Chemical mapping of a 207-nucleotide RNA with DMS and 2A3.
2A3 adducts were read by reverse transcription with SuperScript II with manganese.
For DMS, 9,020 sequencing reads were counted.
RNA sequence: GGGAACGACUCGAGUAGAGUCGAAAAGGUCUAUUCGUAGACCAUGCGGGGGUCGAGUACGAUGAGCUGUGGAUGCCACAGCUGAAGCCUCCACGGCUGGAGCUAAUCCACUGCGAGUACUCGACGGAGGCACCCUCACAGCAACCUUCGGGUUGAAUUCCUAUAUUUGAUUCGUCAAAUAUAGGAAAAAAGAAACAACAACAACAAC
Reactivity to DMS in 0.01 (KOAc 150mM, MgCl2 10mM, bicine 150mM(pH8.5), 24C), signal-to-noise 3, nucleotides 027 to 156: g020g000u000c000u000a040u010u010c240g020u000a040g010a030c000c000a070u000g030c040g010g000g030g010g010u000c010g000a060g020u000a030c010g020a190u000g010a230g010c030u000g030u000g010g010a100u000g010c030c050a090c010a020g010c000u000g000a040a100g010c040c020u000c020c050a290c060g010g000c020u000g030g010a120g060c140u000a100a120u000c000c010a030c000u010g010c040g010a220g010u000a010c000u000c010g020a020c020g030g000a100g050g020c030a080c020c010c000u000c060a070c040a100g010c020a090a040c010c010u000u000c190g040g010g020u000u000g000a110a190
Reactivity to 2A3 in 0.01 (KOAc 150mM, MgCl2 10mM, bicine 150mM(pH8.5), 24C), signal-to-noise 3, nucleotides 027 to 156: g010g000u010c010u020a050u050u180c260g100u050a010g000a000c010c020a010u120g050c100g000g060g000g020g000u000c010g000a010g010u000a010c040g070a250u220g110a070g040c030u040g020u020g020g000a010u130g000c030c030a110c040a100g000c010u010g000a030a020g020c020c020u040c040c030a030c010g010g000c000u010g050g020a050g000c060u130a120a060u000c010c010a000c020u050g000c020g010a020g000u000a000c000u000c000g000a000c010g000g000a000g010g010c000a020c010c010c000u040c020a130c030a030g140c010a000a030c000c000u050u140c210g080g000g020u010u030g000a010a090